About this RNA: An RNA of 177 nucleotides, treated with 2A3 and DMS and read out base by base. DMS (dimethyl sulfate) methylates the pairing face of unpaired adenines and cytosines. The 2A3 profile rests on 2,444 reads. For DMS the reverse transcriptase was MarathonRT. 2A3 adducts were read by reverse transcription with SuperScript II with manganese. Conditions: 150 mM KOAc, 10 mM MgCl2 and 150 mM bicine (pH 8.5), 24 C. For DMS, 3,155 sequencing reads were counted.
RNA sequence: GGGAACGACUCGAGUAGAGUCGAAAAUUACAUUAUCUUAGCGUUACACAAUAAUCUAAGAUUACUGUGUAAUAAUUACAGCCUCAGUCAAGUAAGUGACUCUGUAAAGGAGAAAGAAGCACGAUGAAUCGUGCGGAUAUUUCGAUAUCCGCACGAUAAAAGAAACAACAACAACAAC
Reactivity to 2A3 in 0.01 (KOAc 150mM, MgCl2 10mM, bicine 150mM(pH8.5), 24C), signal-to-noise 3, nucleotides 027 to 126: u060u040a050c020a050u030u120a070u060c020u040u060a020g060c030g090u030u020a010c020a000c010a070a030u050a000a020u000c070u090a200a100g000a020u000u020a030c030u020g010u000g000u020a010a040u060a060a060u090u080a030c030a040g040c010c040u090c040a010g030u010c020a050a120g030u060a100a100g030u080g060a020c010u020c000u030g040u080a110a060a090g130g020a010g090a030a090a000g100a050a000g140c030a020c090g140a060u210g110a060
Reactivity to DMS in 0.01 (KOAc 150mM, MgCl2 10mM, bicine 150mM(pH8.5), 24C), signal-to-noise 4, nucleotides 027 to 126: u010u020a100c080a060u000u010a060u000c010u010u000a120g020c180g010u000u010a010c030a030c100a030a070u000a020a000u010c010u020a130a170g000a010u000u010a030c110u000g010u000g000u000a000a000u000a060a130u000u010a030c050a070g000c300c080u000c140a030g000u000c030a050a150g010u010a080a070g000u000g000a060c000u000c020u010g010u000a050a060a100g000g010a050g000a050a100a100g000a130a110g020c090a030c120g020a100u010g010a110